[RMDB]
RNA sequence: GGGAACGACUCGAGUAGAGUCGAAAAUUUAACGCUGUUUUAUUGGCGCAAAGGUUUACGGAUAAACAACUAAUAAUUAAACCUUUUGUGUGCGAAACGUGUUUGUUUAACGUACUCUUUAAUCGCUUUGGGGAUGUGUCCUUCGGGACACAUCCAAGAUUCACAAUAGAUUCGUCUAUUGUGAAUCAAAAGAAACAACAACAACAAC
Reactivity to 2A3 in 0.01 (KOAc 150mM, MgCl2 10mM, bicine 150mM(pH8.5), 24C), signal-to-noise 6, nucleotides 027 to 156: u090u100u040a020a010c010g000c050u080g070u040u070u010u040a130u130u160g080g000c000g000c010a010a010a000g020g010u010u010u020a040c080g060g050a100u190a200a150a030c040a090a020c090u190a060a160u110a150a040u190u030a060a020a020c010c000u030u070u110u090g060u020g020u050g070c060g020a040a020a000c020g010u020g010u020u050u050g030u000u060u020a060a020c040g010u060a060c020u020c000u070u140u150a120a120u100c050g050c130u100u110u140g100g050g000g000a000u010g000u000g000u000c000c000u010u030c150g010g010g000a000c000a000c000a000u000c000c000a000a000
Reactivity to DMS in 0.01 (KOAc 150mM, MgCl2 10mM, bicine 150mM(pH8.5), 24C), signal-to-noise 2, nucleotides 027 to 156: u000u000u010a060a090c040g050c010u010g010u000u000u000u000a090u040u000g020g030c010g020c070a060a060a060g010g000u000u000u010a060c080g020g000a240u010a090a140a140c060a080a110c070u010a080a140u000a090a170u000u000a030a120a040c010c000u010u000u000u000g050u000g030u000g000c060g000a070a060a010c070g020u000g020u000u000u010g000u000u000u010a040a110c070g030u000a030c020u000c040u000u000u000a080a080u010c040g050c020u000u000u000g010g000g010g010a020u000g010u000g020u010c000c010u000u000c300g020g070g000a010c010a000c000a000u000c000c010a010a090